[RMDB]
This 207-nucleotide RNA was probed chemically with DMS and 2A3.
DMS adducts were read by reverse transcription with MarathonRT.
The DMS profile rests on 7,022 reads.

RNA sequence: GGGAACGACUCGAGUAGAGUCGAAAAAAGGGAGGUCUACAACGAAAGGACUCUCCUGUUGCGAUACGGGAAAAGAGAAGAGCUCUUCGUCGUCUGUCGAGAAUGUAAUUUUUCUGAUAUUCUCCCCUUGAACAGAGAGCCUGUUCACAAAGUCAAAUGGAUAGAAAUAUUUCGAUAUUUCUAUCCAAAAAGAAACAACAACAACAAC
Reactivity to DMS in 0.01 (KOAc 150mM, MgCl2 10mM, bicine 150mM(pH8.5), 24C), signal-to-noise 3, nucleotides 027 to 156: a090a020g010g010g020a040g020g010u000c010u010a120c050a080a150c090g010a060a120a140g000g000a020c000u000c000u000c000c000u000g010u000u000g010c050g010a180u010a110c080g010g020g000a060a060a070a110g020a120g010a060a060g010a080g010c040u000c020u000u010c030g030u000c050g010u000c070u010g030u010c050g000a080g010a040a040u010g010u010a100a110u010u000u000u010u010c050u000g000a090u020a110u010u010c010u000c000c000c020c050u000u000g000a070a070c030a050g000a280g010a140g040c090c010u000g000u000u000c000a060c070a020a060a100g010u010c040a030a140a200
Reactivity to 2A3 in 0.01 (KOAc 150mM, MgCl2 10mM, bicine 150mM(pH8.5), 24C), signal-to-noise 1, nucleotides 027 to 156: a000a000g020g000g010a020g000g020u010c020u030a020c020a100a020c030g060a030a010a010g020g000a020c010u000c000u000c070c000u010g020u000u030g000c020g010a020u030a110c020g000g030g010a010a010a040a040g050a010g040a110a000g000a030g010c010u040c000u010u020c030g020u020c000g010u000c040u030g060u010c030g000a000g010a040a010u030g000u060a000a030u030u050u010u020u040c030u050g020a060u000a010u050u020c010u000c000c000c000c000u000u020g000a000a000c000a000g020a000g000a010g100c040c010u000g000u010u000c010a010c010a020a030a000g050u090c020a000a020a090